RNA sequence: GGGAACGACUCGAGUAGAGUCGAAAACUGGGCGCGGCGGCGAGCGUCCCGGACCGGAAGGGCCGCGAGCCCCCGCGCCUGGAGGAAGGAGAAGUCGUAACAAGGUAUCCGUAGGUGAACCUGCGGAACUGAGUACGCUUUUCGAAGCGUACUCAGUAAAAGAAACAACAACAACAAC
Reactivity to 2A3 in 0.01 (KOAc 150mM, MgCl2 10mM, bicine 150mM(pH8.5), 24C), signal-to-noise 2, nucleotides 027 to 126: c000u020g000g000g010c010g000c030g000g020c000g010g010c000g000a000g020c000g000u010c000c010c000g040g050a150c090c030g070g080a110a040g050g000g000c030c000g020c000g000a000g000c000c000c000c000c020g000c000g000c000c000u000g000g010a010g030g040a060a050g070g050a080g010a130a000g070u040c060g030u130a140a030c090a130a030g130g000u150a140u000c000c000g000u000a000g020g060u150g090a190a280c000c000u000g030c000g000g020a000
Reactivity to DMS in 0.01 (KOAc 150mM, MgCl2 10mM, bicine 150mM(pH8.5), 24C), signal-to-noise 2, nucleotides 027 to 126: c030u020g000g000g040c050g030c000g070g040c300g000g040c020g020a170g010c000g020u000c000c000c020g000g000a120c160c140g000g000a180a170g010g000g020c070c000g010c000g000a300g000c020c000c090c000c010g000c010g000c010c000u000g010g000a040g000g030a040a090g000g000a030g000a020a030g020u000c020g010u000a110a130c100a060a070g000g000u040a140u000c000c000g030u020a020g020g000u020g040a130a180c000c020u000g000c000g000g010a010
Chemical mapping of a 177-nucleotide RNA with 2A3 and DMS. For DMS the reverse transcriptase was MarathonRT. Source: RMDB library RFM100, as collected in RNAgym. For 2A3 the reverse transcriptase was SuperScript II with manganese. For 2A3, 1,698 sequencing reads were counted. Conditions: 150 mM KOAc, 10 mM MgCl2 and 150 mM bicine (pH 8.5), 24 C.